An RNA of 207 nucleotides, treated with 2A3 and DMS and read out base by base. The reactions ran in a buffer of 150 mM KOAc, 10 mM MgCl2 and 150 mM bicine (pH 8.5), at 24 C. The data come from the RNA Mapping Database (RMDB), library ARCHII.

RNA sequence: GGGAACGACUCGAGUAGAGUCGAAAAUAAGGAGUGGUGGAUGGUUCAGGACCGAAAGGUAGCAGACAAAAGCCACCGCGCGGUGCAGUGGCCGGACAGCGCUUGUGAGUUGACACGUAUACACAGCCUUCUCAAUACCUUCAGACCACUUGUCACUACACAAGGAAUACUUCGGUAUUCCUUGUGUAAAAGAAACAACAACAACAAC
Reactivity to 2A3 in 0.01 (KOAc 150mM, MgCl2 10mM, bicine 150mM(pH8.5), 24C), signal-to-noise 3, nucleotides 027 to 156: u220a060a050g080g010a020g000u030g000g000u010g030g050a050u050g030g020u070u070c030a070g060g000a050c000c030g050a050a030a040g040g000u030a030g010c060a030g040a070c020a020a090a020a010g000c000c000a000c030c000g030c020g000c030g110g080u270g020c020a020g000u010g030g000c000c000g020g010a030c120a050g030c060g000c080u070u100g020u010g040a090g020u030u050g060a050c040a020c130g120u180a070u070a120c050a000c010a030g000c010c000u040u020c010u000c040a070a080u140a120c000c000u030u050c020a030g020a110c000c000a020c030u010u080g110u080c010a020c070u020
Reactivity to DMS in 0.01 (KOAc 150mM, MgCl2 10mM, bicine 150mM(pH8.5), 24C), signal-to-noise 1, nucleotides 027 to 156: u010a050a100g020g030a120g050u000g030g000u000g000g040a090u000g000g000u000u000c070a240g000g000a120c040c020g000a060a050a090g000g000u000a070g000c040a120g060a160c060a040a110a110a030g010c000c000a030c000c020g050c010g040c140g070g020u010g000c030a050g010u000g030g040c000c020g030g020a180c090a110g030c070g030c090u010u000g000u000g000a090g030u000u000g000a080c010a080c050g020u000a160u000a080c080a050c070a090g000c030c070u010u000c010u000c000a110a080u010a050c020c000u000u010c040a070g030a060c040c010a040c020u000u000g000u000c020a050c030u000